Background
The data come from the RNA Mapping Database (RMDB), library ARCHII. This 207-nucleotide RNA was probed chemically with DMS and 2A3. Values cover nucleotides 27 to 156. For 2A3, 1,035 sequencing reads were counted.
RNA sequence: GGGAACGACUCGAGUAGAGUCGAAAACAUUGUUAGGACCUUUGGGACAAGCGACGCAUACAGUUGAUCCACACUAACGUUGGUGUCGACAUACUAUCAGUCUCUAAGGAUUGAAAGUAAGUUGAUAAUGACCAAGUCAAGGUCCAGGCUGGCAACACUAAAUAUAGGCGUUCGCGCCUAUAUUUAGAAAAGAAACAACAACAACAAC
Reactivity to DMS in 0.01 (KOAc 150mM, MgCl2 10mM, bicine 150mM(pH8.5), 24C), signal-to-noise 2, nucleotides 027 to 156: c030a130u010u000g010u000u000a160g000g010a030c020c010u000u000u000g060g020g000a090c100a090a180g000c010g010a100c050g060c110a130u000a080c060a110g030u000u000g020a130u000c010c060a150c090a100c010u000a070a000c050g020u000u000g010g000u010g050u000c010g040a030c000a150u000a010c010u000a180u000c010a040g000u000c000u000c030u030a250a170g000g010a030u000u000g000a020a150a080g020u000a000a060g010u000u000g010a040u000a040a090u000g000a050c010c000a050a090g010u000c060a070a040g020g000u000c000c030a180g000g000c030u020g030g010c030a080a110c080a110
Reactivity to 2A3 in 0.01 (KOAc 150mM, MgCl2 10mM, bicine 150mM(pH8.5), 24C), signal-to-noise 2, nucleotides 027 to 156: c030a060u060u180g030u110u130a090g020g030a020c000c040u040u040u130g060g000g010a000c070a070a040g090c030g040a100c070g030c110a040u100a260c060a090g010u030u050g100a100u040c040c000a060c010a010c040u140a260a030c030g040u030u070g010g000u010g000u030c000g000a020c000a000u030a030c000u040a040u110c020a040g000u000c030u000c090u110a120a050g070g000a010u000u040g000a000a010a000g000u020a050a030g020u050u000g030a070u020a210a060u140g040a060c030c000a040a010g090u050c030a020a030g000g000u010c020c000a010g050g020c040u010g020g030c030a080a000c040a050